[RMDB]
RNA sequence: GGGAACGACUCGAGUAGAGUCGAAAACUAAUGGUUUGGACCUGAGUAAGUUGAAAAAAGACAUACAGCCCUGGCAAGAACGACGUUCGGCGGAAUAUAUGACUCAUGCUCCUUUAGGUUCUUUGAAUUCCGUGGGUGGUGUAGCUACUGAGAUCAAGCCUCAACUUAUUUUCGAAUAAGUUGAGGCAAAAGAAACAACAACAACAAC
Reactivity to DMS in 0.01 (KOAc 150mM, MgCl2 10mM, bicine 150mM(pH8.5), 24C), signal-to-noise 2, nucleotides 027 to 156: c020u010a050a060u000g000g000u000u000u010g010g030a070c000c000u020g030a120g010u000a060a110g040u020u010g000a000a080a040a080a080a090g040a110c040a100u000a130c090a130g010c020c020c020u010g050g020c110a100a150g010a060a100c050g000a070c000g020u000u010c040g020g000c050g030g020a070a060u000a060u000a110u010g020a110c050u000c060a070u000g050c010u000c010c030u010u000u000a080g010g030u010u000c050u010u000u000g020a120a100u000u000c030c040g060u000g010g010g040u000g000g010u000g010u000a070g000c050u000a070c030u000g010a100g030a060u000c080a090a300
Reactivity to 2A3 in 0.01 (KOAc 150mM, MgCl2 10mM, bicine 150mM(pH8.5), 24C), signal-to-noise 2, nucleotides 027 to 156: c020u010a010a050u170g020g050u030u060u060g020g010a040c000c030u020g030a030g030u040a070a110g030u000u160g100a090a060a010a010a020a020g060a010c020a070u120a030c010a050g030c050c000c000u000g030g000c010a070a070g010a060a000c020g060a010c070g120u120u100c050g080g000c020g010g000a030a010u090a020u020a060u120g040a030c000u000c050a040u070g000c020u090c070c100u110u070u180a110g010g000u170u030c000u040u000u100g060a060a030u040u040c010c030g000u020g000g020g040u040g000g000u010g080u010a010g020c010u050a030c030u020g070a020g050a080u260c090a100a080
Source information: An RNA of 207 nucleotides, treated with DMS and 2A3 and read out base by base. The DMS profile rests on 2,840 reads. The 2A3 profile rests on 706 reads. The reactions ran in a buffer of 150 mM KOAc, 10 mM MgCl2 and 150 mM bicine (pH 8.5), at 24 C.